[RMDB]
RNA sequence: GGGAACGACUCGAGUAGAGUCGAAAAGAACGAGAAACUGCAACAAGACGAGAAGCAAGACAAGAUGUUCUUGAAGAGAAUAUAGCCAACAUUAGAAGAGGUAGUGGCAGGAGAUCGUUACUUCGUGGUGGUGGUGGUGGUAUUGGUUUUUACAAUAAACAUUGUCUAUUUUCGAAUAGACAAUGUUAAAAGAAACAACAACAACAAC
Reactivity to 2A3 in 0.01 (KOAc 150mM, MgCl2 10mM, bicine 150mM(pH8.5), 24C), signal-to-noise 8, nucleotides 027 to 156: g020a020a000c030g010a000g050a110a060a020c030u040g010c040a060a030c020a060a110g080a040c040g020a040g020a130a010g040c020a030a010g040a050c030a050a080g060a180u120g050u100u030c010u030u050g050a080a040g020a000g030a130a010u130a020u070a130g030c040c000a040a020c020a130u120u140a050g060a180a010g020a020g030g010u050a020g020u050g040g000c010a000g010g040a030g000a010u020c020g010u040u030a060c000u040u040c040g040u040g030g000u020g010g020u020g000g020u020g000g030u020g010g010u050a080u030u080g020g010u010u020u020u080u090a070c060a020a040u140a090
Reactivity to DMS in 0.01 (KOAc 150mM, MgCl2 10mM, bicine 150mM(pH8.5), 24C), signal-to-noise 4, nucleotides 027 to 156: g010a090a100c050g000a110g000a110a100a080c020u000g000c020a060a100c070a100a130g000a100c040g020a090g010a110a150g030c030a040a090g010a120c060a050a130g010a100u010g010u010u000c030u000u000g010a120a150g000a120g010a070a060u000a070u000a110g020c010c000a040a080c050a090u000u000a110g020a070a080g000a080g010g010u000a080g020u000g010g010c010a060g010g010a090g010a130u000c040g010u000u000a060c050u010u000c040g030u010g010g030u010g020g040u000g010g030u000g010g010u010g020g040u000a060u000u000g000g010u000u010u000u010u010a060c090a050a080u000a120